[RMDB]
RNA sequence: GGGAACGACUCGAGUAGAGUCGAAAAGAAGAGAAGUGAGUAAACGCCUAUACGGUAUAAGCACAGCCCGUCAAAAGGCGUGCGGCGAGGGCACCGGACGCUGUGCUUAUAACUGGGCCUUCGAAGACGGAGCAUAGGGUUUCGACCCUAUGCUCCGAAAAGAAACAACAACAACAAC
Reactivity to 2A3 in 0.01 (KOAc 150mM, MgCl2 10mM, bicine 150mM(pH8.5), 24C), signal-to-noise 2, nucleotides 027 to 126: g080a010a000g070a010g020a140a060g020u080g250a000g030u200a050a110a010c030g000c020c020u110a110u050a140c070g000g000u000a000u000a000a000g000c020a000c000a000g000c030c000c010g050u060c060a110a210a070a000g150g000c020g020u000g000c000g000g010c200g070a030g020g130g000c060a040c040c000g010g010a010c080g060c000u000g000u000g000c000u000u010a050u000a000a000c000u060g010g010g000c000c000u000u000c000g030a120a040g020a060
Conditions: 150 mM KOAc, 10 mM MgCl2 and 150 mM bicine (pH 8.5), 24 C. An RNA of 177 nucleotides, treated with 2A3 and read out base by base. Values cover nucleotides 27 to 126. It was measured as part of the RMDB library OK1LIB.